The record gives the reactivity of an RNA of 170 nucleotides to DMS and 2A3.
Source: RMDB library 15KLIB, as collected in RNAgym.
The RNA was probed in 150 mM KOAc, 10 mM MgCl2 and 150 mM bicine (pH 8.5) at 24 C.
2A3 adducts were read by reverse transcription with SuperScript II with manganese.
For DMS the reverse transcriptase was MarathonRT.

[RMDB]
RNA sequence: GGGAACGACUCGAGUAGAGUCGAAAAUGUCUUCUCUCUUUUGAACCUUAAGCUUAGAGCACCUAUGGGUGUCUAUGACUUUAAGGUCUCAACACAAGAGUUCAGAUUCAUGACUGCUAACAAUCUAUAAGUGAGACGUUCGCGUCUCACAAAAGAAACAACAACAACAAC
Reactivity to DMS in 0.01 (KOAc 150mM, MgCl2 10mM, bicine 150mM(pH8.5), 24C), signal-to-noise 3, nucleotides 027 to 129: u040g050u010c000u010u040c070u030c010u030c060u070u020u050u000g000a000a070c000c010u000u000a030a000g000c000u060u000a020g020a140g030c000a030c010c000u020a090u190g000g000g000u030g050u050c010u000a050u030g070a150c040u080u040u010a000a020g050g000u020c080u000c000a020a120c300a100c280a080a020g000a000g020u110u050c060a050g000a080u010u070c060a060u050g050a100c100u060g030c070u080a090a100c130a100a030u000c090u040a050u030a150a060
Reactivity to 2A3 in 0.01 (KOAc 150mM, MgCl2 10mM, bicine 150mM(pH8.5), 24C), signal-to-noise 6, nucleotides 027 to 129: u070g000u000c010u300u030c020u000c000u000c000u010u030u010u020g010a000a000c000c000u000u000a000a000g020c000u010u010a020g020a000g060c010a010c000c000u020a170u270g260g000g000u000g000u000c000u000a020u010g160a210c010u040u070u070a020a000g010g000u000c010u000c020a000a000c060a000c020a010a000g000a000g000u060u060c020a000g010a060u070u040c030a040u100g060a010c020u040g000c010u090a130a090c020a060a120u050c020u070a110u030a230a050